[RMDB]
RNA sequence: GGGAACGACUCGAGUAGAGUCGAAAACACGGGCACGUAUCUUCCGGCACAGUCGGGAAAGGAUGUGUCCAUUCCUCUGGGAAGAAACACAGCGCUUGCGCGUGACGGCCUUACGGUCAUUGCAGAACGCGCUACUGCAGUUCGCUGCAGUAGCGCGAAAAGAAACAACAACAACAAC
Reactivity to 2A3 in 0.01 (KOAc 150mM, MgCl2 10mM, bicine 150mM(pH8.5), 24C), signal-to-noise 1, nucleotides 027 to 126: c120a010c000g000g000g000c060a000c050g050u160a060u040c080u090u000c040c000g170g000c120a200c180a230g110u070c000g010g000g030a130a000a000g000g010a000u070g010u000g000u000c000c000a000u000u000c000c000u000c000u080g040g000g040a120a000g000a000a110a000c090a000c000a040g000c000g000c090u090u170g030c000g000c000g140u000g080a040c030g040g080c020c000u050u240a000c000g060g000u000c000a100u000u080g040c010a030g070a110a020